This 177-nucleotide RNA was probed chemically with DMS and 2A3.
[RMDB]
RNA sequence: GGGAACGACUCGAGUAGAGUCGAAAAGGGAUUGGCGCGGAGGUCAUGGUUCGACCCUAAUGCCGUGGAGUGGCGUCGAUCAGAGCCGCUGUCUUCGCCGAGCCUUUAGUUAUCGUGCUCGGCGGCACGGACUUCCUUAGUUCGCUAAGGAAGUCCGAAAAGAAACAACAACAACAAC
Reactivity to DMS in 0.01 (KOAc 150mM, MgCl2 10mM, bicine 150mM(pH8.5), 24C), signal-to-noise 1, nucleotides 027 to 126: g000g000g000a070u000u010g000g010c040g010c060g000g000a190g030g000u000c030a020u000g020g000u000u000c080g020a190c060c020c040u000a090a120u000g040c010c040g010u010g010g000a030g010u000g000g000c040g030u010c020g010a050u040c060a110g000a130g020c000c020g000c050u000g000u000c060u000u000c030g030c000c000g010a010g000c020c020u000u000u000a150g000u000u000a050u000c030g000u010g010c000u010c010g000g010c000g010g000c160a060
Reactivity to 2A3 in 0.01 (KOAc 150mM, MgCl2 10mM, bicine 150mM(pH8.5), 24C), signal-to-noise 1, nucleotides 027 to 126: g050g010g020a020u020u060g020g000c000g000c030g080g070a080g050g070u070c010a010u110g150g000u120u110c130g050a180c000c000c000u100a140a070u140g020c000c000g000u010g000g030a050g020u050g020g080c000g040u010c040g010a030u060c040a000g070a010g070c030c020g000c100u070g050u060c040u080u100c030g030c010c000g000a000g020c030c000u100u040u040a170g060u140u180a130u080c100g030u220g000c000u000c000g000g000c000g000g000c010a000
Values cover nucleotides 27 to 126.
Source: RMDB library OK2TST, as collected in RNAgym.